[RMDB]
An RNA of 177 nucleotides, treated with DMS and 2A3 and read out base by base. 2A3 adducts were read by reverse transcription with SuperScript II with manganese. The DMS profile rests on 19,350 reads. Source: RMDB library OK1LIB, as collected in RNAgym. The RNA was probed in 150 mM KOAc, 10 mM MgCl2 and 150 mM bicine (pH 8.5) at 24 C. The 2A3 profile rests on 3,498 reads.
RNA sequence: GGGAACGACUCGAGUAGAGUCGAAAAGAUCGGGGUCUGCAACUCGGCCAGGUGGAGUCGGAGACGGUAGUAAUCGCAGAUCAGCAACAGAACGGUAAAUACGUUAAAAGACCUUGUACACACCGGCAAAUUAAUUAUUUUUCGAAAUAAUUAAUUUAAAAGAAACAACAACAACAAC
Reactivity to DMS in 0.01 (KOAc 150mM, MgCl2 10mM, bicine 150mM(pH8.5), 24C), signal-to-noise 7, nucleotides 027 to 126: g000a090u010c050g010g000g010g020u000c010u010g010c030a110a070c060u010c050g010g000c010c010a090g020g020u000g000g000a060g010u000c050g000g010a110g010a070c060g000g010u000a070g010u010a070a080u020c080g000c050a070g000a060u010c060a090g000c100a080a090c170a120g010a030a020c010g000g000u000a070a080a120u030a030c020g000u000u010a030a070a130a090g010a070c040c030u000u020g010u010a080c080a080c040a050c020c020g000g000c080
Reactivity to 2A3 in 0.01 (KOAc 150mM, MgCl2 10mM, bicine 150mM(pH8.5), 24C), signal-to-noise 2, nucleotides 027 to 126: g030a050u040c000g000g000g000g010u000c010u020g010c020a020a060c010u000c000g020g020c020c010a030g030g010u040g040g030a050g000u020c020g060g020a060g010a010c020g020g000u030a030g010u000a060a030u070c030g000c000a000g000a050u020c000a010g060c000a010a020c000a030g070a030a000c010g000g000u010a000a020a000u160a010c000g000u000u040a050a070a000a000g030a020c000c000u010u060g060u090a020c050a000c000a000c020c000g000g010c030